[RMDB]
RNA sequence: GGGAACGACUCGAGUAGAGUCGAAAAGAGAGCCAGGCCGCCAGGUCCUCGGGGGCGUCCAGCGUCUGGCCCCGCUGUAUCAGAUCCCGCAACAGGAUGGCCGUGGGGCUGGUCGCGAUCGGGGGCGUAAGGGUGUACUCUUCGGAGUACACCCUUAAAAAGAAACAACAACAACAAC
Reactivity to 2A3 in 0.01 (KOAc 150mM, MgCl2 10mM, bicine 150mM(pH8.5), 24C), signal-to-noise 2, nucleotides 027 to 126: g080a000g000a000g050c010c010a010g030g050c020c040g060c020c010a010g000g050u040c030c000u000c010g010g000g010g010g000c010g090u000c020c010a020g000c000g280u000c010u000g000g040c000c000c000c000g110c040u010g010u060a160u110c040a070g040a260u020c040c020c040g070c030a060a120c030a130g070g000a120u090g060g000c010c020g020u080g000g030g000g000c000u000g000g000u000c000g000c010g010a000u080c020g030g040g000g000g030c020g010
Reactivity to DMS in 0.01 (KOAc 150mM, MgCl2 10mM, bicine 150mM(pH8.5), 24C), signal-to-noise 2, nucleotides 027 to 126: g000a120g000a090g000c000c010a070g000g000c010c030g000c050c110a090g010g030u000c000c010u000c120g010g010g000g010g000c010g010u000c020c010a090g010c010g000u000c020u000g020g030c000c000c060c010g000c000u000g010u010a070u030c070a140g010a120u010c010c000c020g010c170a110a130c140a090g010g000a060u000g000g020c020c040g000u000g000g000g000g000c010u000g020g010u000c020g030c010g000a040u020c050g010g000g000g000g000c060g030